[RMDB]
RNA sequence: GGGAACGACUCGAGUAGAGUCGAAAAGGUAGGGAUAGGUGGUGAACCUUGGUUCGUGGGGAAAGAUGUGGCAGAGGUGUUGGGAUAUGCCGAAACUGCCAACAUAAGAAAACUUUUAGACGAGGCGUACUAAUAUUCUGUUCGCAGAAUAUUAGUAAAAAGAAACAACAACAACAAC
Reactivity to 2A3 in 0.01 (KOAc 150mM, MgCl2 10mM, bicine 150mM(pH8.5), 24C), signal-to-noise 9, nucleotides 027 to 126: g080g040u140a020g020g010g040a170u100a100g020g050u060g020g040u100g050a020a020c020c010u070u150g090g010u060u060c050g030u080g000g010g000g020a030a090a040g070a050u070g010u020g030g000c010a010g020a040g020g040u060g040u070u070g060g020g020a070u070a030u170g000c000c000g020a090a060a030c010u010g000c000c010a070a050c010a110u110a080a040g090a040a060a020a030c030u080u110u110u140a070g020a040c050g020a020g010g030c020g010
Reactivity to DMS in 0.01 (KOAc 150mM, MgCl2 10mM, bicine 150mM(pH8.5), 24C), signal-to-noise 9, nucleotides 027 to 126: g010g010u030a100g010g010g010a110u020a050g000g010u010g000g020u030g010a080a050c030c030u010u020g020g010u010u010c060g020u010g000g010g000g010a080a070a060g000a060u010g020u000g000g010c010a020g010a120g010g020u010g010u000u010g000g020g010a130u020a050u010g010c010c010g000a050a090a120c020u000g010c000c000a030a050c050a030u010a070a100g010a080a070a080a160c090u010u010u020u020a110g000a080c110g000a100g000g010c080g020